Structure probing data (2A3 and DMS) for a 177-nucleotide construct. The reactions ran in a buffer of 150 mM KOAc, 10 mM MgCl2 and 150 mM bicine (pH 8.5), at 24 C. For DMS the reverse transcriptase was MarathonRT. The DMS profile rests on 1,728 reads. For 2A3, 1,994 sequencing reads were counted. For 2A3 the reverse transcriptase was SuperScript II with manganese.
[RMDB]
RNA sequence: GGGAACGACUCGAGUAGAGUCGAAAACAAUAUGUCACCAACAGAAGAAUACAAAAUCUAUGACACAAACCAUGGACCAGAAUUUCCAAACACAGGAGACCAAACACAACAAGGCAGAAACACAGUCAUGCUUGAAUGAAUUCGUUCAUUCAAGCAUAAAAGAAACAACAACAACAAC
Reactivity to 2A3 in 0.01 (KOAc 150mM, MgCl2 10mM, bicine 150mM(pH8.5), 24C), signal-to-noise 2, nucleotides 027 to 126: c030a000a120u070a100u250g040u050c020a000c040c000a040a060c020a060g100a100a010g000a050a130u150a100c040a020a180a010a020u000c020u040a040u140g020a010c000a000c010a160a090a020c000c000a020u060g000g000a030c010c010a010g000a060a070u060u060u010c000c030a040a060a000c060a010c010a060g040g000a030g000a030c000c000a030a090a000c010a020c040a120a020c020a020a020g030g000c000a000g090a060a100a000c060a010c000a040g030u080c030
Reactivity to DMS in 0.01 (KOAc 150mM, MgCl2 10mM, bicine 150mM(pH8.5), 24C), signal-to-noise 3, nucleotides 027 to 126: c080a100a130u030a080u010g000u000c020a080c070c060a060a050c100a060g000a120a060g010a080a090u010a090c090a040a020a070a140u000c040u010a070u010g010a090c070a010c150a120a070a040c080c030a040u000g010g010a060c030c040a120g000a070a040u000u030u000c010c030a090a060a050c100a030c110a070g000g000a050g000a080c020c040a040a030a010c100a030c110a030a040c080a050a050g020g020c060a050g000a030a060a070c090a030c120a090g000u010c210